[RMDB]
RNA sequence: GGGAACGACUCGAGUAGAGUCGAAAAUAUUUACCAUCUGGAAAUUUCGUUCCAUGUAUAUAAACGCAGAAAAGGAUGGUGCCAAAUGGGCCCAAAAAGGAGAUAAUCGCUGCACCCCUGUAGGUAACCUAGGAUAUCUCUUCGGAGAUAUCCUAGGAAAAGAAACAACAACAACAAC
Reactivity to 2A3 in 0.01 (KOAc 150mM, MgCl2 10mM, bicine 150mM(pH8.5), 24C), signal-to-noise 1, nucleotides 027 to 126: u020a000u020u060u090a040c000c020a040u060c050u070g040g180a090a230a290u230u300u170c040g000u000u030c010c010a060u100g030u060a110u010a060u070a190a110a000c060g090c030a030g110a040a130a030a000g050g010a030u030g020g030u010g060c000c000a200a140a170u110g000g060g050c080c020c110a030a030a030a000a000g100g000a110g010a070u150a130a010u040c070g030c000u030g030c030a100c080c000c000c000u020g070u100a030g120g010u010a020a010
Reactivity to DMS in 0.01 (KOAc 150mM, MgCl2 10mM, bicine 150mM(pH8.5), 24C), signal-to-noise 2, nucleotides 027 to 126: u020a020u010u020u010a060c010c040a100u000c060u020g020g000a080a080a130u020u000u040c100g010u010u020c030c030a060u010g000u000a030u010a140u010a040a050a110c140g000c060a050g020a080a080a150a170g000g010a040u000g000g010u000g020c040c100a070a130a110u010g000g000g000c010c000c000a020a060a020a090a070g000g000a080g000a080u010a030a040u000c050g020c020u010g000c050a290c060c000c030c040u000g010u000a030g030g020u010a070a100